Source information:
This 177-nucleotide RNA was probed chemically with DMS and 2A3. The reactions ran in a buffer of 150 mM KOAc, 10 mM MgCl2 and 150 mM bicine (pH 8.5), at 24 C. The data come from the RNA Mapping Database (RMDB), library M2PK90. The 2A3 profile rests on 1,792 reads.
[RMDB]
RNA sequence: GGGAACGACUCGAGUAGAGUCGAAAAGCAACAUAGAUCGUUCUAUUAACGAACACGCGCGGAUCGUCGGUGGUCGGCGAGCCCACGGACCUACUUGAUCGCGCGAACGAGUAAAAAUCGCCGGCAAACUGCAUAUGAGGUUCGCCUCAUAUGCAGUAAAAGAAACAACAACAACAAC
Reactivity to DMS in 0.01 (KOAc 150mM, MgCl2 10mM, bicine 150mM(pH8.5), 24C), signal-to-noise 2, nucleotides 027 to 126: g010c110a120a070c070a120u000a070g030a110u010c080g010u000u000c030u010a210u000u010a050a070c180g000a050a080c090a120c050g000c030g000c000g000g000a010u000c010g000u000c050g020g020u000g010g000u000c020g000g020c010g000a030g010c240c000c000a040c020g000g000a030c010c040u000a060c110u010u000g010a030u000c010g000c010g010c000g040a020a040c090g010a100g020u010a080a080a060a010a070u000c000g020c020c010g020g030c190a130a060
Reactivity to 2A3 in 0.01 (KOAc 150mM, MgCl2 10mM, bicine 150mM(pH8.5), 24C), signal-to-noise 2, nucleotides 027 to 126: g040c010a000a120c030a060u190a060g090a110u070c040g040u040u020c100u100a210u220u280a150a040c100g010a030a010c030a020c060g060c000g000c000g090g050a060u040c020g000u000c020g070g010u010g000g060u010c020g010g020c020g000a030g060c010c010c000a000c020g010g000a010c030c000u070a090c080u060u130g040a050u060c000g000c000g010c000g000a040a010c020g020a010g050u130a000a030a000a050a080u000c010g010c030c000g000g040c060a180a140